Conditions: 150 mM KOAc, 10 mM MgCl2 and 150 mM bicine (pH 8.5), 24 C.
This 177-nucleotide RNA was probed chemically with 2A3 and DMS.
For DMS the reverse transcriptase was MarathonRT.
For 2A3, 1,009 sequencing reads were counted.
2A3 adducts were read by reverse transcription with SuperScript II with manganese.
[RMDB]
RNA sequence: GGGAACGACUCGAGUAGAGUCGAAAAUCCAGGAUACUGUCCAGAGAAGUCACACAAACUUAGACAUUUCUUCUUCUGAUGUCCACUUGCCAUGACUGUGUGAGGAAGGGAGAGGUCUCUGAAGUGGGACUGUGUCAAGGUUCGCCUUGACACAGUCAAAAGAAACAACAACAACAAC
Reactivity to 2A3 in 0.01 (KOAc 150mM, MgCl2 10mM, bicine 150mM(pH8.5), 24C), signal-to-noise 1, nucleotides 027 to 126: u000c020c010a020g040g000a000u110a140c090u200g090u040c020c050a010g010a010g050a140a010g060u000c000a000c000a000c000a040a300a110c040u070u030a030g010a010c000a000u030u090u000c020u070u000c000u050u060c020u030g040a050u070g070u040c030c000a010c050u110u100g050c070c030a170u120g040a150c010u020g020u020g050u080g160a040g050g010a060a040g020g000g000a010g000a000g030g000u000c010u000c000u050g080a170a020g050u010g010g070
Reactivity to DMS in 0.01 (KOAc 150mM, MgCl2 10mM, bicine 150mM(pH8.5), 24C), signal-to-noise 2, nucleotides 027 to 126: u000c020c020a200g010g000a130u000a040c160u000g020u000c000c040a110g060a150g000a110a050g010u010c020a070c060a130c020a050a060a200c040u000u000a070g010a050c050a120u040u000u000c020u000u000c030u000u000c030u000g000a170u000g020u000c040c100a110c090u000u010g000c110c090a060u010g000a100c060u000g010u010g020u000g010a120g000g010a050a050g010g000g010a040g000a050g020g010u010c010u020c030u000g000a160a180g010u000g000g030